[RMDB]
RNA sequence: GGGAACGACUCGAGUAGAGUCGAAAAGAAACAGGAUCGACAAGGGUGUAAAGAUCGCUCUUUUACUCGGCAUGAUACCACCGUUAUCGGGUCAACAGAGUAGUUGCAAAUGACAACAAUGCUCUGGAAGGGGUAGCACCGUUCGCGGUGCUACCAAGCAUCUUUCGUACUUCGGUACGAAAGAUGCAAAAGAAACAACAACAACAAC
Reactivity to 2A3 in 0.01 (KOAc 150mM, MgCl2 10mM, bicine 150mM(pH8.5), 24C), signal-to-noise 3, nucleotides 027 to 156: g010a020a100a000c070a040g150g010a020u040c060g050a020c120a130a090g100g060g030u110g050u160a160a180a000g040a040u060c010g040c020u000c000u000u090u020u050a070c050u020c020g000g000c000a010u040g010a000u000a020c010c010a000c000c000g040u070u000a030u080c040g010g000g010u000c010a000a010c010a010g010a010g000u070a030g040u010u000g010c050a100a230a240u290g080a210c000a010a000c000a010a070u050g000c000u010c000u000g000g040a040a070g040g040g000g020u000a000g010c000a010c020c010g020u030u040c160g020c010g080g010u000g000c000u000a000c000c000a000a000